Chemical mapping of a 207-nucleotide RNA with DMS and 2A3. Reactivities are given for positions 27 through 156. Source: RMDB library OK3TST, as collected in RNAgym. For 2A3, 1,088 sequencing reads were counted. Conditions: 150 mM KOAc, 10 mM MgCl2 and 150 mM bicine (pH 8.5), 24 C.

RNA sequence: GGGAACGACUCGAGUAGAGUCGAAAAAGGCUGGUCUCGAACGCCUGACCUGAAGUGAUCUGCUUGCCUCCACCUCCCAAAGUGUUGGGAUUACAGUCGUGAGCCACUGCACCCAGCCGUUCUUACCUUCUUAAUUGAACCAGUUUAUACUCAUAUAAGUAGUUUUAGCAUUCGUGCUAAAACUACUAAAAGAAACAACAACAACAAC
Reactivity to DMS in 0.01 (KOAc 150mM, MgCl2 10mM, bicine 150mM(pH8.5), 24C), signal-to-noise 2, nucleotides 027 to 156: a050g010g010c020u010g000g000u020c030u020c100g010a060a120c070g020c050c020u010g000a080c000c040u000g010a050a090g000u000g010a080u000c030u000g000c020u000u000g010c040c000u000c030c090a060c190c110u010c020c000c010a060a090a190g030u010g030u000u000g010g010g030a160u010u000a060c080a050g050u000c060g050u000g030a050g000c000c030a080c030u010g000c050a100c090c000c000a080g030c000c000g000u000u000c000u000u010a110c040c030u010u000c050u000u000a070a200u000u030g010a090a050c010c050a160g020u000u000u010a130u010a110c050u000c000a140u010a100u030a140
Reactivity to 2A3 in 0.01 (KOAc 150mM, MgCl2 10mM, bicine 150mM(pH8.5), 24C), signal-to-noise 2, nucleotides 027 to 156: a000g090g000c010u010g000g020u010c050u070c080g020a080a040c020g000c010c000u030g020a110c000c040u070g060a100a030g030u030g050a120u070c040u130g000c030u070u070g050c000c000u000c010c000a030c000c030u030c010c000c000a090a080a010g190u180g120u160u010g010g000g030a030u060u140a050c020a030g020u000c030g050u010g040a020g050c020c000a030c020u030g000c000a050c000c020c000a010g000c020c010g020u030u020c020u030u090a140c010c000u110u100c090u120u200a170a130u170u090g020a020a010c030c000a020g030u100u040u000a090u030a000c050u040c090a140u200a100u160a230